About this RNA:
This 207-nucleotide RNA was probed chemically with 2A3 and DMS.
RNA sequence: GGGAACGACUCGAGUAGAGUCGAAAAUCGAGUGUAAGACCAAGGGGCCUAGCCCACUGGUAAGUCCUCAGUGUGUAUAUUUGAAUGCGUAAAUUACUGCUCCUGGAGAAAAGAGAAUGAGAUUAACUUCAAAGGAUAGUUAUACAGAAAAGAUUGGACUUUAAUCUAUCUUCGGAUAGAUUAAAGUAAAAGAAACAACAACAACAAC
Reactivity to 2A3 in 0.01 (KOAc 150mM, MgCl2 10mM, bicine 150mM(pH8.5), 24C), signal-to-noise 4, nucleotides 027 to 156: u070c010g000a030g020u130g040u100a080a030g010a070c030c030a060a060g040g000g000g000c030c090u060a050g020c020c000c020a050c030u010g030g000u030a040a040g080u060c010c010u010c030a030g010u030g010u020g010u070a030u020a100u200u190u150g110a150a010u140g010c010g030u090a050a060a130u120u090a050c040u030g030c020u000c030c010u030g030g010a040g050a050a100a060a010g060a010g030a070a100u120g030a050g010a070u090u050a050a060c030u040u030c080a090a080a000g040g000a010u020a010g000u040u040a070u050a120c060a030g170a050a120a020a010g060a070u100u100g030g030
Reactivity to DMS in 0.01 (KOAc 150mM, MgCl2 10mM, bicine 150mM(pH8.5), 24C), signal-to-noise 3, nucleotides 027 to 156: u000c060g000a130g040u010g020u000a060a110g010a070c030c000a080a070g020g000g020g010c010c100u000a140g010c030c020c020a050c030u010g040g020u000a030a120g000u010c030c020u010c030a100g020u010g000u010g020u020a070u010a090u000u000u010g010a090a090u000g020c060g010u010a050a040a140u000u010a070c040u000g010c030u000c020c020u010g030g000a120g020a080a060a040a140g000a080g010a060a050u000g010a160g000a190u000u010a040a100c050u000u000c020a050a090a100g020g000a090u010a060g010u000u010a070u000a230c020a090g000a100a060a050a090g000a160u000u000g020g000
2A3 adducts were read by reverse transcription with SuperScript II with manganese. DMS adducts were read by reverse transcription with MarathonRT. The reactions ran in a buffer of 150 mM KOAc, 10 mM MgCl2 and 150 mM bicine (pH 8.5), at 24 C.